[RMDB]
RNA sequence: GGGAACGACUCGAGUAGAGUCGAAAAGUGAUAUUCGUAUCACGAGAUAGGGGUCGGUCUACCCACCUGGCCGAGCAUCGAUCGUACUGAAGCCUCCACGGUACGGGAGCUCGGGAGGACCGACGGAGGCACCCGUAGACACCGCUUCGGCGGUGAAUGGUACUUAUCAGUUCGCUGAUAAGUACCAAAAAGAAACAACAACAACAAC
Reactivity to 2A3 in 0.01 (KOAc 150mM, MgCl2 10mM, bicine 150mM(pH8.5), 24C), signal-to-noise 2, nucleotides 027 to 156: g010u010g050a000u000a030u060u290c300g020u000a000u000c000a000c000g040a080g030a070u180a100g020g030g030g010u000c000g000g000u000c030u040a200c030c010c070a100c070c210u180g150g000c030c070g000a000g000c000a000u300c050g040a030u060c000g010u000a000c000u020g020a140a020g000c030c000u000c000c020a000c000g000g000u000a000c000g000g000g000a030g020c020u010c020g000g070g010a140g010g010a010c000c010g000a000c060g000g010a000g000g020c000a000c000c030c000g110u100a060g050a130c000a000c080c000g050c040u060u050c210g170g000c010g040g000u000g000a000a010